[RMDB]
RNA sequence: GGGAACGACUCGAGUAGAGUCGAAAAGGAGAGCACAGCCAGUUGUGGGUUUUUCUUGGGGCCCAGAUAGAUGGGAACAGAGGUGGAGGCCCCUCUCUCCCAGCACCCCCCCAGCACACACACUAGGCCUCUAGUUUCCUUUCGAGGAAACUAGAGGAAAAGAAACAACAACAACAAC
Reactivity to 2A3 in 0.01 (KOAc 150mM, MgCl2 10mM, bicine 150mM(pH8.5), 24C), signal-to-noise 2, nucleotides 027 to 126: g030g000a020g000a000g020c030a020c040a100g020c010c000a040g020u070u040g020u110g020g060g050u020u000u000u090u100c050u040u070g030g010g040g010c030c040c060a030g040a050u120a040g150a100u040g010g030g000a050a040c030a060g020a030g080g020u140g040g100a060g050g060c020c000c030c000u010c000u000c000u000c000c010c000a010g020c000a050c000c000c020c000c000c000c000a010g000c050a010c010a000c000a000c000a000c030u050a070g080g000
Reactivity to DMS in 0.01 (KOAc 150mM, MgCl2 10mM, bicine 150mM(pH8.5), 24C), signal-to-noise 1, nucleotides 027 to 126: g000g020a000g010a030g010c120a060c120a030g020c030c090a140g060u000u000g020u010g000g000g000u020u010u000u010u000c030u030u040g000g030g030g000c080c040c000a030g000a100u010a100g010a130u000g020g000g000a020a060c180a090g000a000g000g010u030g000g000a100g020g000c020c010c040c000u040c010u000c030u010c000c010c020a060g000c070a100c030c000c000c090c000c000c000a150g040c050a030c070a040c140a050c120a080c080u000a120g010g020
Annotation
Conditions: 150 mM KOAc, 10 mM MgCl2 and 150 mM bicine (pH 8.5), 24 C. The record gives the reactivity of an RNA of 177 nucleotides to 2A3 and DMS. The 2A3 profile rests on 1,692 reads. For 2A3 the reverse transcriptase was SuperScript II with manganese. As a SHAPE reagent, 2A3 marks flexible, mostly unpaired nucleotides at the ribose 2'-OH.